[RMDB]
RNA sequence: GGGAACGACUCGAGUAGAGUCGAAAAGGUCAGCCAAUACACAGCGUGGGCUCGUCGCGGCCAUCGCCCGCAGCGCAACGCGACUAUCAGGUCUUCUGUUUGGCCAGGACCCCACACCGUACGAGCGACGUGGGUGCUACUUCGGUAGCACCCACGUAAAAGAAACAACAACAACAAC
Reactivity to 2A3 in 0.01 (KOAc 150mM, MgCl2 10mM, bicine 150mM(pH8.5), 24C), signal-to-noise 1, nucleotides 027 to 126: g020g000u030c030a030g000c000c000a000a010u270a030c030a010c040a060g000c000g070u300g060g080g000c070u050c040g060u000c010g000c000g020g120c000c110a100u040c100g040c000c000c020g180c100a020g000c050g010c060a130a020c000g000c000g000a000c000u060a190u120c050a060g110g000u000c050u140u000c000u050g080u210u070u020g000g000c010c000a030g020g050a030c010c000c000c000a030c000a000c020c010g010u030a050c080g050a100g030c020g000

Chemical mapping of a 177-nucleotide RNA with 2A3.
As a SHAPE reagent, 2A3 marks flexible, mostly unpaired nucleotides at the ribose 2'-OH.
2A3 adducts were read by reverse transcription with SuperScript II with manganese.
The 2A3 profile rests on 689 reads.
The data come from the RNA Mapping Database (RMDB), library OK1LIB.